[RMDB]
This 177-nucleotide RNA was probed chemically with DMS and 2A3. Conditions: 150 mM KOAc, 10 mM MgCl2 and 150 mM bicine (pH 8.5), 24 C. For DMS the reverse transcriptase was MarathonRT. Reactivities are rounded to 0.1 and cut off at 0 and 3. For 2A3 the reverse transcriptase was SuperScript II with manganese.
RNA sequence: GGGAACGACUCGAGUAGAGUCGAAAAGCAGACAUCCAUGCCUGUGCUGCGGCAAUGCGACCGCUCUUGUCUCUUUUGUGGCCACAUGGGCUGCCGAGCACAGCCCAACAAUCAACGUCGCUAAGAGGACGUAAUAGGGUUUCGACCCUAUUACGUCAAAAGAAACAACAACAACAAC
Reactivity to DMS in 0.01 (KOAc 150mM, MgCl2 10mM, bicine 150mM(pH8.5), 24C), signal-to-noise 4, nucleotides 027 to 126: g020c030a020g000a090c070a070u020c180c140a070u000g000c030c020u000g000u000g000c030u000g060c000g010g030c010a080a060u020g000c140g000a020c040c300g000c000u010c000u000u020g010u000c040u000c020u000u020u020u010g000u010g010g010c050c130a040c140a070u010g000g000g000c010u000g030c030c070g020a110g030c080a140c030a010g000c000c010c000a090a050c150a060a100u070c160a050a120c260g000u000c000g000c000u020a080a070g020a120g010
Reactivity to 2A3 in 0.01 (KOAc 150mM, MgCl2 10mM, bicine 150mM(pH8.5), 24C), signal-to-noise 6, nucleotides 027 to 126: g030c020a020g060a150c030a120u070c080c030a090u110g010c010c010u030g010u040g040c030u100g150c010g010g010c040a060a130u190g010c010g030a060c010c020g020c020u000c020u040u100g050u020c010u020c000u040u100u090u240g160u160g050g000c050c010a080c040a150u050g020g000g000c020u020g000c010c030g040a020g010c040a010c000a020g010c000c000c000a040a050c050a010a050u230c080a040a080c060g010u010c000g010c030u040a100a040g080a080g200